[RMDB]
RNA sequence: GGGAACGACUCGAGUAGAGUCGAAAAGCGUGGACGUGGGUUUGUCCCAUCCUGAAGGUCAGUCCUUUAUCAAAGGCAUCGCCAAACAUAAAGCCGUGGAUGAAACCGGCGUAAACCCCGGGUACGCCUGGGGAGUGACUUUCGAGUCACUCCCCAGAAAAGAAACAACAACAACAAC
Reactivity to 2A3 in 0.01 (KOAc 150mM, MgCl2 10mM, bicine 150mM(pH8.5), 24C), signal-to-noise 5, nucleotides 027 to 126: g020c040g000u040g040g100a070c030g060u250g050g060g000u020u060u100g070u090c000c000c000a010u010c010c000u020g020a060a060g030g020u100c050a030g120u160c030c010u110u060u040a300u100c120a120a070a010g040g000c030a090u080c030g020c050c020a040a100a050c070a120u180a130a130a040g020c020c020g030u080g030g030a060u050g050a070a100a050c050c040g010g010c000g020u020a000a040a030c010c000c000c000g000g030g150u010a000c030g020c010
Reactivity to DMS in 0.01 (KOAc 150mM, MgCl2 10mM, bicine 150mM(pH8.5), 24C), signal-to-noise 2, nucleotides 027 to 126: g000c000g030u000g000g000a030c010g000u040g010g020g010u000u010u010g000u000c040c010c000a040u010c030c030u000g000a080a080g000g000u010c160a110g000u010c020c000u000u000u000a080u010c180a070a130a040g000g010c030a080u030c160g010c020c020a110a060a180c190a050u010a080a070a130g000c010c030g030u030g000g000a100u030g010a030a110a110c140c060g000g000c060g000u050a060a020a030c010c010c000c000g030g000g020u000a030c040g030c010